[RMDB]
This 207-nucleotide RNA was probed chemically with 2A3.
RNA sequence: GGGAACGACUCGAGUAGAGUCGAAAACCGUAGGCAGGGAACUACAUUUCGCUGUGGCAAUGAUGUUGGAUUCGAAAGAGUCCAAUUGAGCCACAGACCGAAAUGCCCUGCCUAAACGGAAAAGCCAUUCUGAUCGUUUCGACGAUCAGAAUGGCAAGUGGGUAUGAUACUUCGGUAUCAUACCCACAAAAGAAACAACAACAACAAC
Reactivity to 2A3 in 0.01 (KOAc 150mM, MgCl2 10mM, bicine 150mM(pH8.5), 24C), signal-to-noise 1, nucleotides 027 to 156: c000c000g000u000a000g000g010c010a020g060g030g020a080a040c130u190a100c300a000u040u000u000c010g000c020u010g000u000g000g010c000a060a300u050g030a000u090g050u020u000g000g000a000u000u000c000g030a020a050a050g000a000g010u040c010c000a000a000u000u020g000a010g000c000c000a000c020a030g000a020c110c080g020a000a000a000u000g000c000c000c000u000g000c000c000u000a000a000a000c000g050g050a010a040a010a080g020c000c000a000u000u000c010u010g010a030u020c040g050u090u180u170c300g150a070c030g000a150u000c000a010g000a010a000u000g000g000c000a000a000

2A3 adducts were read by reverse transcription with SuperScript II with manganese.